[RMDB]
RNA sequence: GGGAACGACUCGAGUAGAGUCGAAAAGGGGUCUUGCUAAUCUCCUUUGAUCUUUGCGACAUGAGCUGAAGCCUCCACGGCUCAACAGCGCAAAGGGAGGAGACAACAAGACGGAGGCACCCAAAGGUUGACGAGGCGUUCGCGCCUCGUCAACCAAGCGAUUAUAUUACUUCGGUAAUAUAAUCGCAAAAGAAACAACAACAACAAC
Reactivity to 2A3 in 0.01 (KOAc 150mM, MgCl2 10mM, bicine 150mM(pH8.5), 24C), signal-to-noise 1, nucleotides 027 to 156: g110g010g030g010u000c010u000u010g020c040u100a190a170u060c000u000c010c020u280u300u020g010a000u000c010u000u020u000g010c010g040a090c070a300u200g010a040g000c000u010g000a090a030g030c000c000u010c010c000a020c010g020g000c010u020c020a050a080c060a050g140c010g010c020a000a000a000g000g000g000a000g000g000a010g010a010c000a020a020c010a010a000g010a000c000g010g010a000g010g000c010a020c000c000c000a070a110a080g000g000u000u000g000a000c000g000a000g000g000c110g130u130u090c290g050c000g030c060c020u050c000g000u000c000a010a000c010c000a000a020